Background
This 177-nucleotide RNA was probed chemically with DMS and 2A3. Source: RMDB library M2PK90, as collected in RNAgym. The 2A3 profile rests on 9,101 reads. Values cover nucleotides 27 to 126. The reactions ran in a buffer of 150 mM KOAc, 10 mM MgCl2 and 150 mM bicine (pH 8.5), at 24 C.

RNA sequence: GGGAACGACUCGAGUAGAGUCGAAAAGCUGAGUAUACGAGGUUAGUUCUUUCUCGUAUGCAUGAUUGGACAAAUUAAAAUCUCAAUUUGGAUCAGGGCCUCCCUCCAGCGACGGCCGAACAUACAAAGAUCAGAUUAAAUUCGUUUAAUCUGAUCUAAAAGAAACAACAACAACAAC
Reactivity to DMS in 0.01 (KOAc 150mM, MgCl2 10mM, bicine 150mM(pH8.5), 24C), signal-to-noise 7, nucleotides 027 to 126: g020c020u000g010a170g020u000a010u000a010c000g010a020g000g010u010u010a100g010u000u010c120u000u000u010c000u000c000g010u000a000u000g010c010a120u000g010a060u000u010g000g010a070c030a030a030a050u000u000a060a060a100a130u020c140u000c100a030a040u000u000u000g010g000a100u000c030a070g010g000g010c010c000u000c020c010c020u000c100c020a040g010c020g010a070c170g010g000c010c020g000a050a060c120a070u010a110c170a040a080
Reactivity to 2A3 in 0.01 (KOAc 150mM, MgCl2 10mM, bicine 150mM(pH8.5), 24C), signal-to-noise 4, nucleotides 027 to 126: g000c010u030g040a010g040u020a000u000a010c010g010a010g030g040u140u120a060g050u240u100c020u070u150u020c000u010c000g000u000a010u000g010c010a070u070g020a060u030u100g040g020a010c010a010a040a020u080u100a100a140a160a280u090c070u010c110a020a060u020u020u040g070g030a120u060c030a050g000g040g030c000c010u000c010c010c000u060c040c000a000g000c010g040a020c030g000g000c000c000g000a030a020c030a030u190a030c050a020a170